About this RNA:
Source: RMDB library OK1LIB, as collected in RNAgym. Structure probing data (2A3 and DMS) for a 177-nucleotide construct. Values are in units of 0.01, from 0 to 300, in steps of 10. For DMS, 26,626 sequencing reads were counted.
RNA sequence: GGGAACGACUCGAGUAGAGUCGAAAAAGGGUGCCGGCGUGCGGAGCUAUGGCGCCAGGGCUGUCGGGUGGGGGCACGCCACCUGUGACAGCUGCGUCCGAGCAACUGGUCCCUGGUGCGAAGCUGGUCUAGGGACCGCGUUCGCGCGGUUCCUAGGAAAAGAAACAACAACAACAAC
Reactivity to 2A3 in 0.01 (KOAc 150mM, MgCl2 10mM, bicine 150mM(pH8.5), 24C), signal-to-noise 3, nucleotides 027 to 126: a000g030g010g010u030g020c000c000g030g000c030g010u060g020c030g020g010a030g020c010u010a040u100g060g000c020g000c000c010a000g000g020g000c000u010g010u030c000g000g000g010u020g000g000g000g010g040c020a010c010g020c000c000a000c000c000u050g050u070g040a010c010a000g000c000u000g010c010g020u010c020c020g010a020g020c020a020a060c010u010g000g020u020c010c000c000u020g020g000u030g000c010g020a030a010g040c020u030g000g030
Reactivity to DMS in 0.01 (KOAc 150mM, MgCl2 10mM, bicine 150mM(pH8.5), 24C), signal-to-noise 6, nucleotides 027 to 126: a070g010g000g010u000g000c030c030g010g010c040g000u010g010c070g010g020a100g000c030u000a090u050g000g010c040g000c000c130a060g010g010g010c050u000g010u000c010g010g010g020u000g000g010g010g000g000c050a030c070g000c010c000a010c010c000u000g020u040g010a090c020a000g000c030u000g010c070g000u020c050c060g010a140g010c080a060a080c070u000g000g010u000c050c020c000u010g000g010u020g010c010g000a090a080g000c020u010g000g010

The RNA was probed in 150 mM KOAc, 10 mM MgCl2 and 150 mM bicine (pH 8.5) at 24 C.